[RMDB]
RNA sequence: GGGAACGACUCGAGUAGAGUCGAAAACUGGGCUCCGAGACUGGAGUUCAAUUUCCCUUACGAUUUUUCAGCAUCUACUUCGCUGGAAGUCGGGGGAGUUGAUCCUGUUUUGGGAUACGGGUGGGACACAUCUUAACUUCUUCGGAAGUUAAGAUGUAAAAGAAACAACAACAACAAC
Reactivity to 2A3 in 0.01 (KOAc 150mM, MgCl2 10mM, bicine 150mM(pH8.5), 24C), signal-to-noise 4, nucleotides 027 to 126: c030u020g000g060g040c060u050c080c040g030a030g060a060c060u080g030g000a050g040u030u040c010a000a010u080u090u070c000c010c000u020u120a040c020g000a010u150u100u040u080u300c000a010g000c020a050u050c090u290a220c120u200u200c140g000c000u010g000g020a010a000g000u000c000g000g000g010g000g000a010g010u010u020g020a020u010c000c000u010g070u030u020u060u060g130g000g010a080u150a230c040g020g040g100u240g050g050g030a010c030
Reactivity to DMS in 0.01 (KOAc 150mM, MgCl2 10mM, bicine 150mM(pH8.5), 24C), signal-to-noise 7, nucleotides 027 to 126: c150u000g000g010g010c060u010c020c010g010a090g010a050c090u010g010g000a040g010u010u000c000a000a020u000u010u000c010c000c000u010u000a270c040g010a010u000u000u000u000u010c000a010g010c010a090u020c300u010a100c240u000u010c140g010c000u000g000g010a010a010g010u000c010g010g000g000g000g010a040g010u000u000g010a060u000c010c000u000g010u000u000u000u000g010g010g000a150u000a090c130g000g000g000u000g010g000g000a300c230
The record gives the reactivity of an RNA of 177 nucleotides to 2A3 and DMS. The data come from the RNA Mapping Database (RMDB), library OK2TST. DMS adducts were read by reverse transcription with MarathonRT.